[RMDB]
RNA sequence: GGGAACGACUCGAGUAGAGUCGAAAAUCGCCAGGUUCGUAAAGUGGUUAGGCAAGUGUUGUGUGCCCUGUGUUUAAGUACUGGUGGUUCCGUCCACUGGUGCACUCGCUUGGCACCUAAGCAGUGUAACCUAACCUGAGUUCGCUCAGGUUAGGUUAAAAGAAACAACAACAACAAC
Reactivity to 2A3 in 0.01 (KOAc 150mM, MgCl2 10mM, bicine 150mM(pH8.5), 24C), signal-to-noise 1, nucleotides 027 to 126: u030c000g030c000c050a000g000g070u060u040c010g070u230a100a060a060g060u070g130g030u060u040a080g000g070c090a180a070g050u000g050u070u100g030u050g010u000g110c060c000c020u000g020u000g060u000u000u070a140a100g000u010a000c000u000g000g000u000g000g000u300u060c010c040g080u170c000c000a000c000u000g010g000u000g040c010a020c000u020c000g000c000u000u000g010g010c000a010c000c000u090a020a020g010c000a040g010u010g060u180
Reactivity to DMS in 0.01 (KOAc 150mM, MgCl2 10mM, bicine 150mM(pH8.5), 24C), signal-to-noise 2, nucleotides 027 to 126: u040c050g010c020c000a150g000g020u000u000c070g000u000a040a140a100g010u000g010g000u020u020a060g040g000c060a060a060g020u030g020u010u000g020u000g030u000g000c000c020c030u000g000u010g000u000u010u010a030a050g020u000a010c000u000g000g080u000g000g010u000u030c250c200g000u030c000c020a040c000u000g000g050u000g010c010a020c000u000c000g030c010u010u000g000g000c050a020c020c060u010a040a090g050c050a080g000u020g010u010